This 177-nucleotide RNA was probed chemically with 2A3 and DMS.
For DMS the reverse transcriptase was MarathonRT.
For 2A3 the reverse transcriptase was SuperScript II with manganese.
The RNA was probed in 150 mM KOAc, 10 mM MgCl2 and 150 mM bicine (pH 8.5) at 24 C.
RNA sequence: GGGAACGACUCGAGUAGAGUCGAAAAGAUAUGGAGCUACAUUGAGAAGUGGCCUCGGAAACGAGGAAUCUUCAAUGAUGUGUGAGCUCCUAAGUCAAACAGGUACUCCGUUCGCGGAGUACCUGAAGCCUCUUAAUUCGUUCGCGAAUUAAGAGGCAAAAGAAACAACAACAACAAC
Reactivity to 2A3 in 0.01 (KOAc 150mM, MgCl2 10mM, bicine 150mM(pH8.5), 24C), signal-to-noise 2, nucleotides 027 to 126: g000a000u020a010u060g000g000a010g000c010u040a020c020a010u030u060g030a010g010a020a030g020u060g270g170c000c010u010c010g030g030a030a020a010c010g000a010g010g080a000a020u050c000u040u000c020a070a300u000g000a010u000g040u030g030u070g150a030g030c000u000c000c000u000a030a000g000u020c020a080a090a180c000a010g000g000u010a010c010u030c000c000g050u040u070c290g000c010g110g010a000g010u000a000c000c000u010g010a000a010
Reactivity to DMS in 0.01 (KOAc 150mM, MgCl2 10mM, bicine 150mM(pH8.5), 24C), signal-to-noise 1, nucleotides 027 to 126: g000a010u000a120u000g000g000a010g010c020u000a000c000a000u010u000g010a080g020a020a000g010u010g020g010c030c000u010c000g040g010a020a020a030c000g030a000g000g000a040a060u000c000u000u000c000a300a300u020g000a020u000g000u000g000u000g000a030g010c000u000c000c000u000a000a070g000u000c000a100a100a140c010a000g000g010u000a010c000u000c000c030g030u000u010c180g000c010g000g010a040g030u000a000c000c000u000g000a040a080
The DMS profile rests on 1,505 reads.